[RMDB]
Conditions: 150 mM KOAc, 10 mM MgCl2 and 150 mM bicine (pH 8.5), 24 C. The record gives the reactivity of an RNA of 177 nucleotides to 2A3 and DMS. It was measured as part of the RMDB library M2PK50.

RNA sequence: GGGAACGACUCGAGUAGAGUCGAAAACAGUGUUUCUUCGGAAACACUGAAAUAAACCGAUCAAAUAUAACCAUAUAACGCGAAGAUCGGAAAAGAGCAAUAAAAGAACCGCCUUCGGGCGGUUCAACAUUUACUUUUAGUUCGCUAAAAGUAAAUGAAAAGAAACAACAACAACAAC
Reactivity to 2A3 in 0.01 (KOAc 150mM, MgCl2 10mM, bicine 150mM(pH8.5), 24C), signal-to-noise 1, nucleotides 027 to 126: c000a030g000u010g000u010u000u000c000u020u000c100g030g010a020a000a000c000a000c020u010g020a010a010a000u130a020a000a000c020c000g000a000u010c020a020a270a020u150a060u070a170a100c030c060a020u130a020u030a250a070c020g010c040g200a150a060g010a040u020c020g040g050a060a100a010a050g020a010g020c060a040a120u080a160a180a020a100g020a000a000c000c020g070c020c020u070u080c190g100g060g050c000g020g000u000u010c000a000a000
Reactivity to DMS in 0.01 (KOAc 150mM, MgCl2 10mM, bicine 150mM(pH8.5), 24C), signal-to-noise 1, nucleotides 027 to 126: c010a000g000u000g010u000u000u000c000u000u000c130g000g000a020a000a000c000a000c000u000g000a010a020a120u000a090a160a230c010c000g000a020u010c000a060a120a190u000a050u030a120a160c080c080a150u020a110u000a030a090c130g000c100g000a090a040g000a000u000c000g000g010a090a000a040a110g020a090g010c060a050a120u010a150a130a150a290g010a020a020c000c000g010c000c010u000u030c140g060g050g040c000g020g000u000u000c000a020a020